[RMDB]
RNA sequence: GGGAACGACUCGAGUAGAGUCGAAAAUGGUGAGGGCCUUCUUCCUGGUUCAUAGACCGUGCCUUCUUGCUGCGUCCUUACGUGGUAGAAGAGGCAGGGGUCUCCCUCCAGCCUCUUUUUAUAAGGACACUAAUCCCAUGCACAAGGGCUCUGUCCAUGAGUAUUUAAUGUUCGCAUUAAAUACUCAAAAAGAAACAACAACAACAAC
Reactivity to 2A3 in 0.01 (KOAc 150mM, MgCl2 10mM, bicine 150mM(pH8.5), 24C), signal-to-noise 2, nucleotides 027 to 156: u130g000g000u050g000a030g000g000g020c010c020u030u070c050u110u080c050c040u040g010g050u060u090c070a080u150a150g020a050c050c030g040u020g010c010c000u090u100c020u020u040g000c010u010g000c030g000u020c050c030u120u140a040c020g040u040g030g060u190a080g020a080a000g000a010g000g000c000a010g080g050g000g070u030c080u040c090c000c000u000c030c010a080g010c000c000u040c000u120u100u020u000u000a110u050a100a030g000g010a030c000a010c040u060a060a070u090c020c030c010a010u080g070c070a040c010a100a060g010g010g010c010u000c000u030g060u000c000c020a040
Reactivity to DMS in 0.01 (KOAc 150mM, MgCl2 10mM, bicine 150mM(pH8.5), 24C), signal-to-noise 1, nucleotides 027 to 156: u010g020g030u000g020a050g030g020g000c040c000u010u000c050u000u010c070c040u020g010g040u000u000c050a160u010a090g000a040c030c020g040u000g040c000c020u000u000c050u000u000g000c100u000g020c000g000u010c040c020u010u000a040c070g030u000g060g030u010a080g010a020a040g030a030g020g050c010a300g030g030g010g000u000c120u040c110c050c010u000c010c040a280g000c000c010u000c000u000u000u000u000u000a080u010a090a080g010g010a040c000a040c060u000a050a200u000c000c010c020a170u010g000c030a140c020a090a100g020g010g000c050u010c040u000g000u000c000c040a180

An RNA of 207 nucleotides, treated with 2A3 and DMS and read out base by base. It was measured as part of the RMDB library OK3TST. The reactions ran in a buffer of 150 mM KOAc, 10 mM MgCl2 and 150 mM bicine (pH 8.5), at 24 C.